[RMDB]
RNA sequence: GGGAACGACUCGAGUAGAGUCGAAAAUGACCAAUGGCACAGUGCACUUUGGUAUCAUUGGCCCUUAAGGUGGCUACAGUUUUGUUCACUAACAUAAACUCUACUUUGAUUCUUACAAUGAUGCUGCUCAUUGCAGGAGUUUCGACUCCUGCAAUGAAAAAGAAACAACAACAACAAC
Reactivity to DMS in 0.01 (KOAc 150mM, MgCl2 10mM, bicine 150mM(pH8.5), 24C), signal-to-noise 4, nucleotides 027 to 126: u000g000a040c000c010a030a030u000g000g000c070a170c200a150g010u010g010c040a120c050u010u000u000g010g000u000a100u000c000a010u010u010g000g010c020c040c030u000u000a040a100g020g030u000g010g000c300u010a050c170a050g010u000u000u000u000g020u000u010c240a130c210u000a070a060c040a040u000a040a060a050c020u000c040u000a020c070u000u000u010g020a060u010u000c050u000u000a100c090a050a080u010g010a080u000g010c040u000g000c120
Reactivity to 2A3 in 0.01 (KOAc 150mM, MgCl2 10mM, bicine 150mM(pH8.5), 24C), signal-to-noise 2, nucleotides 027 to 126: u030g010a020c000c010a000a020u030g010g030c010a070c090a210g230u060g160c110a100c250u060u100u050g020g010u060a070u060c010a020u000u020g040g000c040c000c000u030u040a110a040g050g030u050g060g000c050u070a060c030a070g020u050u020u060u060g030u040u080c090a030c190u130a100a000c020a040u130a060a070a040c010u020c040u050a070c000u080u030u150g010a040u130u020c030u070u100a030c020a010a110u140g030a070u080g030c030u020g000c000
This 177-nucleotide RNA was probed chemically with DMS and 2A3. The reactions ran in a buffer of 150 mM KOAc, 10 mM MgCl2 and 150 mM bicine (pH 8.5), at 24 C. Values cover nucleotides 27 to 126. For DMS the reverse transcriptase was MarathonRT. The data come from the RNA Mapping Database (RMDB), library OK2TST.